[RMDB]
RNA sequence: GGGAACGACUCGAGUAGAGUCGAAAAAUACAAAUUCUUACGCAGUAGCUGCCUAAAAACCAGCCUGUGUGAUCAAUAACAAAUUGCUUGUGUUUGUUGAUUGGUCUUAUUGUUAACAAGCUACGUUAGAACUGAGUCAGGCUGUUCUAAAAGAGUUCAAACUAAUCUCGUUCGCGAGAUUAGUUUGAAAAGAAACAACAACAACAAC
Reactivity to 2A3 in 0.01 (KOAc 150mM, MgCl2 10mM, bicine 150mM(pH8.5), 24C), signal-to-noise 2, nucleotides 027 to 156: a010u220a080c090a030a170a050u130u040c030u150u060a010c000g000c000a000g020u160a050g020c000u000g030c020c020u050a010a030a030a020a040c000c010a010g020c020c000u010g000u000g020u020g010a010u040c000a020a010u010a000a000c010a000a010a000u030u050g020c000u000u000g000u000g000u020u020u000g010u020u010g170a060u010u010g000g010u010c030u060u110a240u130u170g110u170u070a000a000c000a000a000g000c020u020a000c040g020u010u000a000g010a040a010c050u040g060a030g180u130c050a000g130g060c020u040g020u000u020c010u030a030a040a000a010g040a080g080u020u000